[RMDB]
RNA sequence: GGGAACGACUCGAGUAGAGUCGAAAAGUGAGGACAGGGCUGAGGUGAGAGCCUUCCAGAGUAGACGGAAAGGUUGGGUAAUAGGCUGUGCAGAUUUUUAAGGCUCAUGGAGUGGGGCUUUAGCAGCUUGGUAUAAUGGUUUGGCAAGUAGAGCGAAGAACUACGUAAGCUUCGGCUUACGUAGUUCAAAAGAAACAACAACAACAAC
Reactivity to 2A3 in 0.01 (KOAc 150mM, MgCl2 10mM, bicine 150mM(pH8.5), 24C), signal-to-noise 1, nucleotides 027 to 156: g090u020g000a040g000g000a020c060a060g000g010g060c030u080g060a050g140g000u080g020a110g000a010g010c000c000u040u000c000c040a040g000a020g080u100a010g020a070c040g000g030a060a000a010g120g000u110u100g020g000g000u040a070a090u110a110g090g000c040u000g030u070g030c060a100g030a150u020u080u000u080u270a060a000g000g000c020u000c090a020u050g020g000a040g060u080g000g000g000g000c000u030u000u010a010g010c020a000g000c000u010u110g000g000u030a030u040a080a030u050g020g000u060u030u120g040g000c020a020a010g030u040a000g020a000g060c060g010a020a030